[RMDB]
RNA sequence: GGGAACGACUCGAGUAGAGUCGAAAAAGACUUGCUGCUGCAGCCGCUGACAUUUGGCCAGCUACUGGACAAGCUCUUAAAGGACUAGGAGACUUCUUGCAGAGUACGGUAGGGUCCCUGUUAGGGAAGCUAUUAUGUGAUUCGUCACAUAAUAGCUAAAAGAAACAACAACAACAAC
Reactivity to DMS in 0.01 (KOAc 150mM, MgCl2 10mM, bicine 150mM(pH8.5), 24C), signal-to-noise 9, nucleotides 027 to 126: a070g000a080c040u000u010g010c030u000g020c050u010g010c050a080g010c060c100g010c030u000g010a080c070a140u010u020u020g010g020c030c020a050g010c040u020a060c080u010g000g000a080c120a070a070g010c030u000c020u000u010a050a080a090g000g000a100c120u010a060g000g000a080g000a090c070u000u010c050u020u010g000c080a040g010a070g010u010a060c080g000g010u000a040g010g000g010u000c000c020c010u000g010u020u010a070g020g010g010a130
Reactivity to 2A3 in 0.01 (KOAc 150mM, MgCl2 10mM, bicine 150mM(pH8.5), 24C), signal-to-noise 9, nucleotides 027 to 126: a000g070a030c020u030u050g010c010u020g010c010u030g010c020a030g030c020c030g020c050u050g040a060c040a160u130u140u180g080g000c020c000a010g030c030u070a070c030u050g030g020a030c030a090a040g000c020u000c010u040u100a110a100a040g110g020a060c080u060a040g060g040a070g040a070c010u030u020c010u040u100g030c050a020g010a030g060u070a080c040g010g020u040a020g050g020g020u030c010c000c000u060g100u160u120a090g000g010g060a040
Source: RMDB library OK1LIB, as collected in RNAgym. Structure probing data (DMS and 2A3) for a 177-nucleotide construct. The reactions ran in a buffer of 150 mM KOAc, 10 mM MgCl2 and 150 mM bicine (pH 8.5), at 24 C. For DMS the reverse transcriptase was MarathonRT. For DMS, 45,978 sequencing reads were counted.